RNA sequence: GGGAACGACUCGAGUAGAGUCGAAAACGUCGACUCGAGCUUCUGGUGCCCGAGAUGGACUGUCCUUCCUGUGCCGGGAAGAUACGCAAAAGCGUCGAGGCGCUCGAGGGCAUCGACGAGAUCGAACUAAUUUAUGAUACUUCGGUAUCAUAAAUUAAAAAGAAACAACAACAACAAC
Reactivity to DMS in 0.01 (KOAc 150mM, MgCl2 10mM, bicine 150mM(pH8.5), 24C), signal-to-noise 9, nucleotides 027 to 126: c140g010u000c010g010a070c020u000c000g000a140g010c100u010u010c090u010g030g010u000g010c010c010c000g010a210g000a110u000g010g010a100c080u010g010u010c170c020u000u000c010c010u000g020u010g020c180c100g000g010g010a050a040g000a090u000a020c040g010c030a090a090a110a130g010c010g010u000c080g010a150g010g010c090g000c030u000c040g000a210g000g010g010c040a040u000c000g000a110c020g000a070g010a110u000c020g000a060a190c110
Reactivity to 2A3 in 0.01 (KOAc 150mM, MgCl2 10mM, bicine 150mM(pH8.5), 24C), signal-to-noise 9, nucleotides 027 to 126: c020g120u010c000g010a010c010u010c010g020a060g070c050u140u080c080u190g040g010u030g000c000c010c020g010a030g000a040u120g030g060a050c080u110g040u050c010c000u010u020c020c010u110g080u210g200c090c110g000g020g000a010a020g020a070u120a040c020g000c040a070a120a130a230g010c000g010u030c040g080a100g070g000c020g000c010u010c010g020a040g010g010g000c010a030u010c000g020a020c020g010a010g010a100u050c020g010a020a010c020